[RMDB]
RNA sequence: GGGAACGACUCGAGUAGAGUCGAAAAACGUACCUGCAAGAUCAUGUCGCUCAUGCCUGCACCUCUGCCACCACAUUGCCGGUACGCGGAUGGAAACAGGCAGCGCGAUGCGCAAUGCCCUCAUCCACGUAGUAUCAUCGUUCGCGAUGAUACUACGAAAAGAAACAACAACAACAAC
Reactivity to DMS in 0.01 (KOAc 150mM, MgCl2 10mM, bicine 150mM(pH8.5), 24C), signal-to-noise 5, nucleotides 027 to 126: a100c120g010u000a100c030c020u000g000c050a060a080g010a120u000c090a080u010g020u000c060g010c020u000c060a130u000g010c020c010u000g020c160a190c020c020u000c010u010g020c020c050a090c040c050a110c130a140u000u010g000c120c100g010g010u000a040c170g000c070g010g000a050u020g010g010a050a100a220c100a050g010g000c020a050g000c300g020c010g020a050u010g010c060g020c030a090a090u000g000c010c010c030u000c050a110u000c030c070a110
Reactivity to 2A3 in 0.01 (KOAc 150mM, MgCl2 10mM, bicine 150mM(pH8.5), 24C), signal-to-noise 5, nucleotides 027 to 126: a000c050g040u040a050c010c010u020g010c040a030a020g010a140u110c040a070u170g020u040c020g000c010u020c030a190u060g030c000c000u040g030c040a050c000c010u020c010u030g000c010c020a030c020c000a070c030a210u150u300g100c070c070g020g000u040a050c030g000c010g030g000a080u240g020g010a060a090a040c020a030g000g000c010a010g000c000g000c010g080a060u140g000c000g010c010a050a100u080g020c020c000c000u040c020a060u020c020c010a060

About this RNA
The record gives the reactivity of an RNA of 177 nucleotides to DMS and 2A3. Reactivities are given for positions 27 through 126. DMS adducts were read by reverse transcription with MarathonRT.